Structure probing data (DMS and 2A3) for a 207-nucleotide construct. It was measured as part of the RMDB library M2RFPK. 2A3 adducts were read by reverse transcription with SuperScript II with manganese.
RNA sequence: GGGAACGACUCGAGUAGAGUCGAAAAUCAUUGAGAUGCUGGGCGCUAUGGUCGUCCUCCUCCGGCUGACCCCCUUCUCAGCUGCUGACCGGCGCCGCACAGGCGGCAUCUCAGCUUCGUGUGCAAAAAAAGAAUGGUCGGUUCGCCGACCAUUCAAGAAUUCUCUAUGGUUCGCCAUAGAGAAUUCAAAAGAAACAACAACAACAAC
Reactivity to DMS in 0.01 (KOAc 150mM, MgCl2 10mM, bicine 150mM(pH8.5), 24C), signal-to-noise 2, nucleotides 027 to 156: u000c040a160u000u000g010a060g020a030u000g010c010u000g020g000g030c020g010c020u000a040u010g060g000u000c010g000u010c020c010u000c050c020u000c020c020g020g000c000u010g010a070c060c070c090c080c060u010u010c130u010c010a010g000c010u010g010c070u000g000a050c040c030g000g000c000g010c000c000g030c070a060c110a120g040g010c040g000g020c000a020u010c020u000c000a040g000c090u000u020c110g000u010g020u000g000c010a020a000a110a160a100a110a170g020a010a010u000g000g000u000c000g030g030u000u000c300g030c030c000g010a000c010c010a000u000u000c000a050a180
Reactivity to 2A3 in 0.01 (KOAc 150mM, MgCl2 10mM, bicine 150mM(pH8.5), 24C), signal-to-noise 1, nucleotides 027 to 156: u160c030a030u000u150g000a010g000a000u010g000c010u030g010g000g040c050g040c040u080a150u300g030g010u040c030g100u070c030c020u020c010c020u020c020c010g020g000c000u000g000a040c030c020c000c020c070u170u000c020u000c040a010g010c010u030g030c100u120g020a010c000c000g000g020c020g000c020c020g000c030a080c000a020g140g030c000g000g010c000a000u000c000u000c000a000g000c000u160u170c100g060u090g080u050g060c050a100a030a000a000a070a000a020g000a000a000u020g000g000u000c010g010g040u040u030c100g020c080c000g000a000c000c000a030u000u000c000a000a000